Structure probing data (2A3 and DMS) for a 177-nucleotide construct.
High 2A3 reactivity points to a flexible backbone, as in loops and unpaired stretches.
The DMS profile rests on 2,693 reads.
The RNA was probed in 150 mM KOAc, 10 mM MgCl2 and 150 mM bicine (pH 8.5) at 24 C.
2A3 adducts were read by reverse transcription with SuperScript II with manganese.

RNA sequence: GGGAACGACUCGAGUAGAGUCGAAAAGAAUCGCUCCUUGUCCGAAGAUCAUCAUGCUGCGGGUCAGAAUGUUAGCCCCUUCAACGGUGAUGGCAAUCGGUGCGCCCUGGUAAGCACGCGCCAGGAACGGAAUAGGUACUUUCGAGUACCUAUUCCGAAAAGAAACAACAACAACAAC
Reactivity to 2A3 in 0.01 (KOAc 150mM, MgCl2 10mM, bicine 150mM(pH8.5), 24C), signal-to-noise 3, nucleotides 027 to 126: g080a020a090u070c020g000c020u010c000c010u060u060g060u050c000c020g060a080a050g040a160u010c010a010u000c010a020u080g020c020u020g030c100g040g000g000u050c020a030g110a290a120u200g030u170u120a030g020c030c010c030c000u090u080c080a100a040c060g030g000u030g000a030u010g030g000c010a040a110u070c070g020g030u040g010c030g020c010c000c000u010g000g000u080a130a080g100c050a050c140g050c030g000c010c000a010g020g030a010a040
Reactivity to DMS in 0.01 (KOAc 150mM, MgCl2 10mM, bicine 150mM(pH8.5), 24C), signal-to-noise 3, nucleotides 027 to 126: g020a060a060u010c060g010c050u000c010c010u010u020g030u000c000c040g010a120a080g010a090u010c030a030u000c030a060u000g010c020u000g010c300g010g000g010u000c050a070g010a070a090u000g010u020u010a150g000c020c010c030c020u000u010c090a060a090c090g000g020u010g000a040u000g000g030c160a070a050u010c060g010g030u000g030c070g000c150c010c010u010g000g000u000a070a050g000c050a080c080g010c090g000c000c010a020g010g010a120a110